[RMDB]
The record gives the reactivity of an RNA of 177 nucleotides to DMS and 2A3. 2A3 adducts were read by reverse transcription with SuperScript II with manganese. It was measured as part of the RMDB library M2PK50. For 2A3, 1,798 sequencing reads were counted.

RNA sequence: GGGAACGACUCGAGUAGAGUCGAAAACGACGGGUCUUCGGACCCGUCGAAAUAAUGCGUAGCUCGCGCUACGCAGGCAUCGAGUAGGUCGAGCCACCAACAAAAGCUUCGAGUUCGCUCGAAGCAACUUCACUGUCUACUUCGGUAGACAGUGAAGAAAAGAAACAACAACAACAAC
Reactivity to DMS in 0.01 (KOAc 150mM, MgCl2 10mM, bicine 150mM(pH8.5), 24C), signal-to-noise 1, nucleotides 027 to 126: c030g020a030c030g000g000g000u000c000u000u010c300g020g020a000c010c020c000g000u030c000g000a020a030a050u010a060a130u000g000c000g020u000a020g010c010u050c300g020c300g000c000u000a000c020g020c000a000g010g020c060a070u000c030g020a010g000u010a080g000g000u020c000g000a120g000c000c010a070c100c000a150a060c150a070a100a080a120g000c000u000u000c000g000a020g000u000u010c090g000c000u000c000g020a000a000g000c000a010a020
Reactivity to 2A3 in 0.01 (KOAc 150mM, MgCl2 10mM, bicine 150mM(pH8.5), 24C), signal-to-noise 2, nucleotides 027 to 126: c010g000a000c000g000g020g000u050c010u090u070c210g110g010a010c000c000c000g010u020c000g000a000a000a000u100a020a040u080g000c000g000u020a000g000c000u030c130g100c030g000c030u000a000c010g000c010a000g030g000c010a290u050c000g010a030g020u270a130g150g300u030c010g020a000g000c020c020a030c030c010a050a130c040a040a100a010a030g000c010u010u000c000g020a020g030u050u120c180g070c060u000c000g010a000a000g000c000a010a010